The record gives the reactivity of an RNA of 177 nucleotides to 2A3 and DMS.
Reactivities are given for positions 27 through 126.
2A3 adducts were read by reverse transcription with SuperScript II with manganese.
For DMS the reverse transcriptase was MarathonRT.
The RNA was probed in 150 mM KOAc, 10 mM MgCl2 and 150 mM bicine (pH 8.5) at 24 C.
The data come from the RNA Mapping Database (RMDB), library RFMREP.
RNA sequence: GGGAACGACUCGAGUAGAGUCGAAAAAGCGUUAUUACUCAAGGAACGAUAAGUGAGGGUAGUACUGCUAACACCAUUUGUGAUUUAUCACACUCCGCACCGCUGCUUCCUUGUGGAGUUGGUCGGUGACUGAGGACAAGUUCGCUUGUCCUCAGUCAAAAGAAACAACAACAACAAC
Reactivity to 2A3 in 0.01 (KOAc 150mM, MgCl2 10mM, bicine 150mM(pH8.5), 24C), signal-to-noise 2, nucleotides 027 to 126: a000g010c010g020u010u010a010u020u020a010c020u000c050a070a090g230g010a110a070c040g060a160u090a300a110g060u030g070a080g000g010g020u000a010g020u010a000c040u080g000c000u020a030a020c040a070c040c000a040u040u110u160g000u000g020a060u110u000u140a140u080c010a020c000a000c010u090c030c030g040c000a010c000c010g000c030u030g000c000u040u030c020c000u110u090g090u230g030g010a030g030u140u130g050g010u130c030g020g000u030
Reactivity to DMS in 0.01 (KOAc 150mM, MgCl2 10mM, bicine 150mM(pH8.5), 24C), signal-to-noise 1, nucleotides 027 to 126: a000g020c010g030u000u000a040u000u000a010c000u000c020a160a180g000g010a120a050c030g000a110u000a120a120g000u000g010a230g000g000g000u030a000g030u010a030c020u000g000c010u000a080a130c190a250c010c010a160u000u010u010g010u000g010a050u000u010u000a100u000c010a010c010a120c130u000c010c060g040c100a050c000c010g000c020u000g010c030u000u000c000c000u000u020g020u000g030g010a020g000u000u000g010g050u010c010g020g010u000